[RMDB]
RNA sequence: GGGAACGACUCGAGUAGAGUCGAAAACAGAGCCCGUUCAUGGGUGAUGGCGUGCCUUUUGUAGAAUGAACCGGCGAGUUACGGUCCCAUGCAAGGUUAAGCUGAAAAAGCGGAGCCGCAGCGAAAGUGUUACUGACUAGUUCGCUAGUCAGUAACAAAAAGAAACAACAACAACAAC
Reactivity to 2A3 in 0.01 (KOAc 150mM, MgCl2 10mM, bicine 150mM(pH8.5), 24C), signal-to-noise 3, nucleotides 027 to 126: c020a000g100a010g100c000c010c030g030u110u110c060a100u170g050g000g080u050g060a110u090g090g020c060g080u090g030c020c000u070u130u070u130g110u060a090g040a190a080u040g000a040a010c020c030g010g000c010g040a040g010u040u060a050c080g020g030u000c000c000c010a040u150g010c000a080a020g000g000u050u060a020a010g030c000u030g080a080a070a070a070a070g010c000g000g010a000g000c010c020g000c060a000g020c030g050a080a030a020g130
Reactivity to DMS in 0.01 (KOAc 150mM, MgCl2 10mM, bicine 150mM(pH8.5), 24C), signal-to-noise 5, nucleotides 027 to 126: c030a040g020a300g010c010c010c100g020u010u010c100a060u000g000g000g020u000g010a110u010g010g010c100g010u010g010c030c020u000u000u000u000g030u010a060g010a120a080u000g010a080a030c010c130g010g000c020g010a190g000u000u010a070c140g000g000u010c000c000c030a110u010g000c030a070a120g020g010u000u010a140a300g010c000u010g000a050a060a080a140a050g010c010g010g030a300g000c010c030g000c160a230g000c030g000a080a070a100g010
The record gives the reactivity of an RNA of 177 nucleotides to 2A3 and DMS. It was measured as part of the RMDB library OK2TRN. For 2A3, 2,652 sequencing reads were counted. The RNA was probed in 150 mM KOAc, 10 mM MgCl2 and 150 mM bicine (pH 8.5) at 24 C. The DMS profile rests on 3,205 reads.